[RMDB]
RNA sequence: GGGAACGACUCGAGUAGAGUCGAAAAGACGUUAUCUUCGGAUAACGUCAAAGAACGCUCAGCAGGAAAUAAAAAGCUGCGGAAGAGAGCGACAAAACCAAAAAAUCCGUUUCUUCGGAAACGGAAACUGUGAACUUAAGUUCGCUUAAGUUCACAGAAAAGAAACAACAACAACAAC
Reactivity to 2A3 in 0.01 (KOAc 150mM, MgCl2 10mM, bicine 150mM(pH8.5), 24C), signal-to-noise 2, nucleotides 027 to 126: g000a000c000g010u000u000a000u010c020u030u050c150g050g010a000u010a000a000c010g010u000c000a000a000a010g000a080a040c010g000c020u010c020a000g010c010a010g000g100a220a150a070u160a090a240a100a080a040g110c010u020g000c000g010g070a160a040g210a020g010a000g040c020g020a010c040a020a110a010a020c010c030a000a010a010a010a000a140u030c000c000g000u000u000u000c010u020u040c250g110g000a010a000a000c000g000g000a000a000a010
Reactivity to DMS in 0.01 (KOAc 150mM, MgCl2 10mM, bicine 150mM(pH8.5), 24C), signal-to-noise 2, nucleotides 027 to 126: g010a010c000g030u010u000a000u000c000u000u010c180g010g020a010u000a000a010c010g020u000c000a020a080a100g000a210a030c030g000c000u000c020a210g020c000a000g040g010a110a100a050u000a050a120a230a270a270g010c000u000g010c000g020g000a150a180g000a220g000a010g020c010g020a100c080a060a040a070a110c020c070a040a030a060a080a090a140u000c000c000g000u000u000u000c000u000u020c140g010g010a010a000a010c010g000g000a000a010a020